[RMDB]
RNA sequence: GGGAACGACUCGAGUAGAGUCGAAAAGUGCUAGCGUACCUAGACGUACCAUGGUACACAUGCUAGAGAGCCAUGUCGAUCGCGUACGAUCCAUAUCGUCGCUCGUCGUACGAUCCGUGAUCUACGACCACAAAGCCUGGUUCGCCAGGCUUUGUGGAAAAGAAACAACAACAACAAC
Reactivity to DMS in 0.01 (KOAc 150mM, MgCl2 10mM, bicine 150mM(pH8.5), 24C), signal-to-noise 2, nucleotides 027 to 126: g020u010g010c020u000a040g010c040g000u010a020c000c000u010a190g010a100c270g010u000a100c120c070a090u010g000g000u000a040c030a230c180a120u010g010c020u000a030g010a070g010a150g000c030c010a050u010g010u010c070g000a150u020c070g020c050g000u010a010c080g000a040u000c070c080a100u020a020u000c050g010u000c060g000c040u000c180g020u000c010g030u000a030c040g030a000u010c080c230g050u010g000a010u000c000u000a020c010g010a090
Reactivity to 2A3 in 0.01 (KOAc 150mM, MgCl2 10mM, bicine 150mM(pH8.5), 24C), signal-to-noise 2, nucleotides 027 to 126: g200u170g020c020u020a000g030c000g040u010a000c010c030u050a030g040a130c080g080u100a100c050c080a070u090g000g050u050a000c050a010c040a050u260g070c020u030a000g000a000g020a010g100c050c010a040u040g060u060c010g040a070u050c040g010c100g040u040a000c020g010a040u030c100c030a050u100a030u160c020g050u000c000g000c020u070c090g190u040c010g000u090a050c090g010a030u020c080c080g070u100g010a020u000c020u000a030c030g040a070